Conditions: 150 mM KOAc, 10 mM MgCl2 and 150 mM bicine (pH 8.5), 24 C. An RNA of 177 nucleotides, treated with 2A3 and DMS and read out base by base. The 2A3 profile rests on 982 reads. The DMS profile rests on 875 reads. Reactivities are rounded to 0.1 and cut off at 0 and 3. The data come from the RNA Mapping Database (RMDB), library OK2TST. Values cover nucleotides 27 to 126. 2A3 adducts were read by reverse transcription with SuperScript II with manganese. High DMS reactivity at an A or C suggests that its Watson-Crick edge is free.

RNA sequence: GGGAACGACUCGAGUAGAGUCGAAAAGACGAUUUAGCUCUCUGUAUGUUCGGAUGGAAAUGUGCUGACCUGGUUGGGGAUACCAAGUCGAAGAAUCGUUGAUUGGUGCACUGGUACUUUCCUUCGAACCCGGUAGCGAAUUCGUUCGCUACCGGGUAAAAGAAACAACAACAACAAC
Reactivity to 2A3 in 0.01 (KOAc 150mM, MgCl2 10mM, bicine 150mM(pH8.5), 24C), signal-to-noise 1, nucleotides 027 to 126: g040a000c030g030a010u070u040u190a010g030c000u010c000u000c010u070g010u100a170u060g080u080u080c010g050g010a040u100g050g040a030a070a050u190g020u000g020c020u040g030a060c000c010u030g180g000u110u130g010g000g000g000a010u040a010c000c000a020a000g020u000c020g030a140a030g070a140a080u050c020g000u030u060g060a100u030u030g010g000u040g020c040a010c140u150g010g010u010a010c030u010u040u050c000c010u030u050c030g010a030
Reactivity to DMS in 0.01 (KOAc 150mM, MgCl2 10mM, bicine 150mM(pH8.5), 24C), signal-to-noise 1, nucleotides 027 to 126: g000a040c050g000a100u000u000u020a120g010c040u000c040u000c050u000g000u020a160u010g010u000u000c050g000g010a040u000g020g000a030a070a030u000g030u000g030c050u010g000a130c010c040u000g000g020u000u010g000g000g000g000a250u000a060c000c000a010a050g000u000c010g010a070a150g000a040a050u000c080g020u000u000g000a210u030u000g000g010u000g020c070a090c280u000g020g020u010a010c070u000u000u000c000c000u000u010c070g000a070